[RMDB]
RNA sequence: GGGAACGACUCGAGUAGAGUCGAAAAUGCAGUUGAACGAGCUACAUCUGCUGCAGAUGGCGGCCAACAUUGCAGCGGGCAUGCUGUAUCUUUCGGAGAGAAAAUUCGUCCACCGGGAUUUGGCCACAUUAUCCGUCACGUUCGCGUGACGGAUAAUAAAAGAAACAACAACAACAAC
Reactivity to 2A3 in 0.01 (KOAc 150mM, MgCl2 10mM, bicine 150mM(pH8.5), 24C), signal-to-noise 2, nucleotides 027 to 126: u080g000c010a000g000u120u120g110a200a070c110g080a130g080c030u100a020c040a100u010c030u070g000c000u010g000c020a020g040a300u020g010g060c040g050g000c000c000a000a000c000a030u000u030g010c010a000g000c050g030g010g070c070a100u160g000c000u000g010u050a060u060c100u000u070u050c040g040g000a050g020a010g070a110a100a080a140u100u080c020g040u020c030c040a110c050c000g060g000g080a080u100u020u040g010g000c000c000a000c010
Reactivity to DMS in 0.01 (KOAc 150mM, MgCl2 10mM, bicine 150mM(pH8.5), 24C), signal-to-noise 3, nucleotides 027 to 126: u000g010c030a030g000u000u000g020a130a130c110g010a120g030c100u010a080c130a110u000c000u000g000c010u000g020c000a040g010a030u000g010g020c070g020g010c020c010a030a200c020a000u010u000g000c020a020g040c020g010g000g020c150a100u000g000c010u000g000u000a030u000c090u010u000u010c040g010g010a300g010a120g000a030a050a110a090u000u000c060g010u000c010c010a110c060c040g030g000g010a190u000u000u000g010g020c000c030a140c170